[RMDB]
RNA sequence: GGGAACGACUCGAGUAGAGUCGAAAAUGGCCAGUGACACAAGUGAGAAUUGGAUGUUAUGACCGUCCAGAAAAGACAAGAUGAGAAAGUGCAGUAUUGACUGUCUUCAAACGCACCUGUCCUUGCUCGUUCAGGGAAGCUUCGGCUUCCCUGAACGAAAAGAAACAACAACAACAAC
Reactivity to 2A3 in 0.01 (KOAc 150mM, MgCl2 10mM, bicine 150mM(pH8.5), 24C), signal-to-noise 1, nucleotides 027 to 126: u060g010g000c000c000a000g030u090g040a020c010a000c000a030a030g060u010g090a100g090a150a090u040u020g010g080a010u020g050u120u190a300u300g060a070c120c010g000u030c010c000a000g140a110a100a000a010g050a010c030a010a030g120a060u080g020a010g020a020a070a020g040u170g070c000a000g030u040a110u090u160g120a020c000u010g070u030c000u010u000c000a020a140a150c010g010c000a000c010c000u030g000u030c000c000u010u010g000c000u000
The record gives the reactivity of an RNA of 177 nucleotides to 2A3.
Source: RMDB libraries RFM100 and RFMREP, as collected in RNAgym.
For 2A3 the reverse transcriptase was SuperScript II with manganese.